[RMDB]
RNA sequence: GGGAACGACUCGAGUAGAGUCGAAAAAAAAAGAUAUGGAGUGUUACUGCUUGGAUUUACCACAUCCCGUAUAUCGGAAACGAUAUACGAACUGUGGUUGUCAGCAGAACACUCCUAAGUCAAAAAACUUAUCGUUUACGUUCGCGUAAACGAUAAGAAAAGAAACAACAACAACAAC
Reactivity to DMS in 0.01 (KOAc 150mM, MgCl2 10mM, bicine 150mM(pH8.5), 24C), signal-to-noise 2, nucleotides 027 to 126: a020a030a120a070a100g000a010u010a300u000g000g000a020g020u010g000u000u000a090c000u010g010c000u000u020g010g000a020u000u010u000a000c030c010a020c000a010u020c180c080c010g010u000a020u000a010u000c000g010g000a100a120a220c000g010a000u000a000u000a000c000g000a030a030c220u000g010u010g010g000u000u010g000u000c000a000g000c000a000g010a030a000c000a000c020u000c000c000u000a010a090g000u030c010a000a110a120a130a050a160
Reactivity to 2A3 in 0.01 (KOAc 150mM, MgCl2 10mM, bicine 150mM(pH8.5), 24C), signal-to-noise 2, nucleotides 027 to 126: a060a030a020a090a020g090a030u090a060u120g010g010a020g030u020g030u120u080a300c020u000g030c000u150u290g240g050a100u300u300u260a010c000c000a000c000a020u080c000c110c000g000u010a000u020a010u010c010g000g000a040a020a040c000g000a010u000a000u000a000c010g000a030a030c110u040g000u010g030g000u010u030g020u020c010a000g000c010a010g030a020a010c000a000c000u000c000c000u010a030a000g030u000c040a050a000a130a030a000a080
Record summary: Chemical mapping of a 177-nucleotide RNA with DMS and 2A3. The reactions ran in a buffer of 150 mM KOAc, 10 mM MgCl2 and 150 mM bicine (pH 8.5), at 24 C. The DMS profile rests on 1,639 reads. For 2A3, 2,588 sequencing reads were counted.